[RMDB]
RNA sequence: GGGAACGACUCGAGUAGAGUCGAAAAAGAGGCGAUCUCGUAAACACGCACUUAAAUAUAACUGGCAAAACUAACAGUUUUAACCAAAACGUAGCAUUAGCUGCCUAAUAAGCGCAGCGAGCUCUUCCUGACAUUGCCUAUGUGUCUGUGAAGAGCAGUGUGUAGGAUGGUUCGCCAUCCUACACACAAAAGAAACAACAACAACAAC
Reactivity to 2A3 in 0.01 (KOAc 150mM, MgCl2 10mM, bicine 150mM(pH8.5), 24C), signal-to-noise 1, nucleotides 027 to 156: a020g000a040g000g000c000g110a300u000c110u070c100g140u180a160a160a040c140a050c210g020c040a040c000u120u110a000a190a000u250a020u050a050a000c070u060g040g000c050a020a000a100a050c120u140a020a020c020a000g000u050u070u020u090a160a040c180c000a030a030a030a030c140g110u090a040g040c020a110u000u140a000g000c000u020g040c000c020u270a300a240u210a300a000g070c230g000c020a000g040c000g000a000g000c000u000c000u000u000c020c000u000g000a000c000a000u040u160g090c000c020u040a090u090g000u000g000u000c000u000g010u160g110a000a000g000a000g080c000a000